[RMDB]
RNA sequence: GGGAACGACUCGAGUAGAGUCGAAAACGUAAGUUCCACGGUUACAAGGCGGGGUAUCCUGAGUACCGUGGGUUGGAAUUCUCGCGGGAAGCUGGGGGUCAUCAACCCCCAAGGCUAAAUACGUCCCCUCCUGUGACAGUUUCGACUGUCACAGGAGAAAAGAAACAACAACAACAAC
Reactivity to DMS in 0.01 (KOAc 150mM, MgCl2 10mM, bicine 150mM(pH8.5), 24C), signal-to-noise 2, nucleotides 027 to 126: c020g010u030a040a080g000u060u020c000c030a040c010g000g010u000u020a050c030a280a030g020g000c160g040g060g000g020u020a040u040c000c000u020g040a230g010u000a110c000c020g000u000g000g000g000u000u040g020g000a100a060u040u000c030u000c030g030c080g060g000g000a140a040g010c070u020g000g040g000g000g090u010c180a120u080c300a050a070c000c000c000c000c000a000a000g000g000c120u030a040a040a140u020a030c200g020u000c000c000c010
Reactivity to 2A3 in 0.01 (KOAc 150mM, MgCl2 10mM, bicine 150mM(pH8.5), 24C), signal-to-noise 2, nucleotides 027 to 126: c020g050u070a010a060g130u080u040c010c000a020c000g000g040u160u220a000c000a060a010g000g010c020g030g090g010g150u190a140u230c000c010u090g010a020g080u000a000c000c000g000u000g000g040g000u080u030g000g110a060a090u010u010c020u000c060g080c030g000g010g010a010a000g060c020u030g010g010g000g020g020u020c030a180u010c030a140a050c030c020c000c000c000a000a000g030g000c000u120a130a100a000u160a040c030g080u090c000c000c000